Structure probing data (2A3) for a 177-nucleotide construct. Source: RMDB library RFM100, as collected in RNAgym. The reactions ran in a buffer of 150 mM KOAc, 10 mM MgCl2 and 150 mM bicine (pH 8.5), at 24 C. Values cover nucleotides 27 to 126. 2A3 adducts were read by reverse transcription with SuperScript II with manganese.
RNA sequence: GGGAACGACUCGAGUAGAGUCGAAAAAGCACUGUACGCAGUGCACAGCCUGAAGUGAUGAUUCACAUUCAUGUCUCUUCUCUGAUAAAUUCUUGAAGAAAAUUUUUGUGUGUCUGAUCAGGCCUAAGGGAUGAGUGUCUUUCGAGACACUCAUCCCAAAAGAAACAACAACAACAAC
Reactivity to 2A3 in 0.01 (KOAc 150mM, MgCl2 10mM, bicine 150mM(pH8.5), 24C), signal-to-noise 3, nucleotides 027 to 126: a000g010c020a030c000u020g020u060a050c190g010c090a000g000u000g000c030a020c050a100g000c020c020u050g040a130a140g250u020g050a020u010g000a010u010u040c020a020c000a000u020u020c060a020u080g250u060c040u000c000u040u000c080u000c020u000g050a040u060a170a250a060u230u070c030u010u020g000a000a000g020a010a040a060a030u030u050u000u030u000g000u000g020u000g010u000c000u010g020a020u000c000a000g000g010c000c000u120a140a110